About this RNA: Conditions: 150 mM KOAc, 10 mM MgCl2 and 150 mM bicine (pH 8.5), 24 C. The record gives the reactivity of an RNA of 177 nucleotides to 2A3 and DMS. DMS (dimethyl sulfate) methylates the pairing face of unpaired adenines and cytosines. For DMS the reverse transcriptase was MarathonRT. Source: RMDB library OK1LIB, as collected in RNAgym.

RNA sequence: GGGAACGACUCGAGUAGAGUCGAAAACAGAUGGCAUUUGAGCACUGUAGAGAAGGCAGGGAGUUUGUGAUGUGAUCACAGUUGGUUCUGGGAUGGUCUGUGCACUGUUUGGAAUGCCAGGUCCUGCCUGGUGUAGCCGUUUCGACGGCUACACCAGAAAAGAAACAACAACAACAAC
Reactivity to 2A3 in 0.01 (KOAc 150mM, MgCl2 10mM, bicine 150mM(pH8.5), 24C), signal-to-noise 3, nucleotides 027 to 126: c050a040g120a120u120g050g000c020a030u000u040u150g060a010g000c030a010c000u020g040u060a020g020a010g010a120a040g020g040c050a020g060g070g010a070g030u060u190u110g040u010g010a090u090g160u190g180a080u010c000a000c010a050g020u100u060g110g110u030u000c030u070g110g010g050a060u100g080g020u030c020u000g110u000g000c030a000c070u070g100u150u090u120g050g090a090a070u000g000c000c000a010g030g050u030c000c000u020g060c000
Reactivity to DMS in 0.01 (KOAc 150mM, MgCl2 10mM, bicine 150mM(pH8.5), 24C), signal-to-noise 2, nucleotides 027 to 126: c080a060g010a140u000g000g010c020a090u010u040u000g000a120g060c000a070c080u030g000u000a040g060a050g030a070a070g000g000c000a060g000g000g000a090g010u040u010u010g010u000g010a050u040g000u020g020a090u000c000a040c040a020g000u000u040g000g000u020u020c010u000g010g000g030a100u010g000g000u020c000u040g010u010g000c030a030c020u000g000u000u040u020g010g000a000a110u040g040c000c010a010g000g010u030c050c010u000g030c110